[RMDB]
RNA sequence: GGGAACGACUCGAGUAGAGUCGAAAAACAGCGAAAGGCACAAGACUUCGAACAUUAUAGCAGUUAGUAGUUGCCUAAACCCAUUGCAAUAUAUGGGACAGUAGAGGUCGCAAGCCUAUACUGUGCUAAAAGUCGCAAGGUUUCGACCUUGCGACAAUGGCAUAUGAGAGUUCGCUCUCAUAUGCCAAAAAGAAACAACAACAACAAC
Reactivity to 2A3 in 0.01 (KOAc 150mM, MgCl2 10mM, bicine 150mM(pH8.5), 24C), signal-to-noise 2, nucleotides 027 to 156: a010c020a000g020c010g030a140a060a040g000g000c000a040c020a010a040g060a030c030u100u070c060g080a080a030c020a190u230u280a130u220a090g040c090a010g010u030u120a030g010u110a020g010u080u030g000c000c010u040a100a020a010c020c000c000a000u020u010g000c010a020a000u040a000u000a010u150g000g000g020a000c000a020g010u030a010g000a010g000g030u110c040g000c180a070a000g000c000c000u000a010u000a000c000u000g020u010g000c000u000a000a020a020a120g010u000c000g000c000a000a000g020g010u030u050u090c120g030a050c010c000u050u000g000c010g020a000c000a000a000
Reactivity to DMS in 0.01 (KOAc 150mM, MgCl2 10mM, bicine 150mM(pH8.5), 24C), signal-to-noise 1, nucleotides 027 to 156: a020c040a070g000c010g030a110a030a060g030g040c000a080c090a090a160g040a090c000u010u000c060g040a150a020c090a040u000u000a110u000a120g020c020a080g000u000u000a110g010u000a040g010u040u000g000c000c000u000a040a080a290c040c000c010a090u000u000g000c090a110a190u000a100u000a040u000g010g020g010a070c000a020g020u000a060g000a030g130g040u020c020g010c300a180a200g040c000c000u000a040u000a060c020u010g000u020g000c040u000a050a110a080a120g010u000c030g000c010a010a040g000g020u000u000u000c300g060a000c010c000u000u000g000c000g000a000c000a000a010
Chemical mapping of a 207-nucleotide RNA with 2A3 and DMS. For DMS, 1,751 sequencing reads were counted. It was measured as part of the RMDB library M2RFPK. DMS adducts were read by reverse transcription with MarathonRT. Reactivities are given for positions 27 through 156.